[RMDB]
Chemical mapping of a 207-nucleotide RNA with 2A3. For 2A3 the reverse transcriptase was SuperScript II with manganese. The reactions ran in a buffer of 150 mM KOAc, 10 mM MgCl2 and 150 mM bicine (pH 8.5), at 24 C. The 2A3 profile rests on 2,117 reads. The data come from the RNA Mapping Database (RMDB), library RNAMAK.
RNA sequence: GGGAACGACUCGAGUAGAGUCGAAAACGCUGGGCCAUGGAGGUGACACAUCGAUCACCUGAAGCGCGCACGGGUGGGAGUGUCCCCGUUGAAAUGGCCUGUGCUGAAGCGCGCACGGCAACCGAAAGGUGCGAAAAGGUUGGGUUCGCCCAACCAACCCAUACCUUGGGUUCGCCCAAGGUAUGGGAAAAGAAACAACAACAACAAC
Reactivity to 2A3 in 0.01 (KOAc 150mM, MgCl2 10mM, bicine 150mM(pH8.5), 24C), signal-to-noise 2, nucleotides 027 to 156: c010g000c010u010g000g010g050c000c000a000u010g050g050a070g040g010u090g010a010c000a000c010a160u300c090g150a120u150c020a010c000c000u020g010a120a060g000c010g000c000g010c010a040c020g000g000g020u000g020g090g020a100g000u010g000u000c050c050c020c010g130u130u130g070a150a150a010u000g010g000c000c000u000g030u010g000c020u060g020a090a020g000c000g020c000g020c000a000c010g040g000c020a040a070c000c000g070a070a030a060g000g000u010g010c020g040a030a020a020a100g000g020u000u000g010g000g060u020u100c200g120c070c000c000a000a000c010c000a000a060